Structure probing data (DMS and 2A3) for a 170-nucleotide construct. The reactions ran in a buffer of 150 mM KOAc, 10 mM MgCl2 and 150 mM bicine (pH 8.5), at 24 C. The 2A3 profile rests on 2,092 reads.
[RMDB]
RNA sequence: GGGAACGACUCGAGUAGAGUCGAAAAGUAGACUGGCGGUCAUACAAUUAUGCUGUGUCUAGUGCCUUCUGGUUAUUCACCCACAUUCCAAUGGCGGGUUUGGUACGAAUGUAUAAUUUGUUAGCAUGUAGGCGGGAGUUCGCUCCCGCCAAAAGAAACAACAACAACAAC
Reactivity to DMS in 0.01 (KOAc 150mM, MgCl2 10mM, bicine 150mM(pH8.5), 24C), signal-to-noise 1, nucleotides 027 to 129: g080u040a030g000a000c000u000g090g070c100g070g000u090c220a120u000a070c150a000a000u060u000a000u000g020c040u040g000u000g000u050c070u000a040g070u000g000c060c030u060u020c100u100g000g050u000u040a060u000u090c180a290c000c000c000a030c070a000u000u070c240c080a010a090u060g050g000c170g000g040g090u070u070u000g000g030u100a000c120g040a050a000u000g000u000a080u040a110a070u000u000u110g020u060u040a080g000c000a000u060g010u030a100
Reactivity to 2A3 in 0.01 (KOAc 150mM, MgCl2 10mM, bicine 150mM(pH8.5), 24C), signal-to-noise 3, nucleotides 027 to 129: g060u010a000g060a000c030u040g180g000c000g120g050u090c000a000u010a100c110a000a090u200u150a020u050g040c050u020g040u020g020u180c030u050a010g010u060g040c000c000u030u100c050u090g130g000u120u000a080u110u040c000a080c040c000c000a000c010a020u180u100c000c060a000a140u070g000g000c000g000g000g000u080u200u000g000g000u020a000c040g160a000a100u070g050u030a010u000a070a160u110u000u090g090u050u030a030g060c030a030u000g110u100a010